[RMDB]
RNA sequence: GGGAACGACUCGAGUAGAGUCGAAAAACUGCCAUACGUGGCAGAAUCACGCCUUACCAGGACUAAACAGCGUGUCUAAAAAACAGUCCUUCAUACCUGAUCUGGAGGGUAGAUCAGGAAUACUAAAAAAAUCGGGUGAAGUUCGCUUCACCCGAAACGAGAAUACUAUGUUCGCAUAGUAUUCUCGAAAAGAAACAACAACAACAAC
Reactivity to DMS in 0.01 (KOAc 150mM, MgCl2 10mM, bicine 150mM(pH8.5), 24C), signal-to-noise 1, nucleotides 027 to 156: a110c010u000g020c000c000a130u000a140c170g050u000g000g000c000a020g000a120a080u000c000a100c050g000c000c070u000u010a080c050c050a080g040g010a040c010u000a200a080a140c040a020g010c010g000u000g000u000c160u010a000a040a050a110a080a050c080a050g000u010c000c010u000u000c060a130u020a190c010c010u020g010a000u010c000u000g030g010a070g040g000g010u040a020g040a010u000c000a030g020g010a050a010u000a120c130u020a020a000a060a080a050a070a100u000c000g010g010g010u000g020a060a030g050u000u030c300g020c020u000u000c000a010c000c010c000g000a000a000a050
Reactivity to 2A3 in 0.01 (KOAc 150mM, MgCl2 10mM, bicine 150mM(pH8.5), 24C), signal-to-noise 5, nucleotides 027 to 156: a000c000u010g000c010c000a040u040a070c160g080u050g010g000c010a010g020a010a000u090c000a000c000g000c010c000u010u040a020c020c040a010g000g010a000c010u060a090a080a030c020a010g010c000g010u000g020u040c090u070a020a020a020a010a000a010c030a010g000u000c020c000u040u110c050a090u060a150c000c000u000g000a000u000c000u020g050g050a060g070g060g030u060a010g010a000u010c010a000g020g010a000a010u120a050c070u130a020a020a030a010a010a020a120u040c000g000g010g000u000g000a000a010g020u040u110c160g010c070u010u000c000a000c000c000c000g000a000a000a000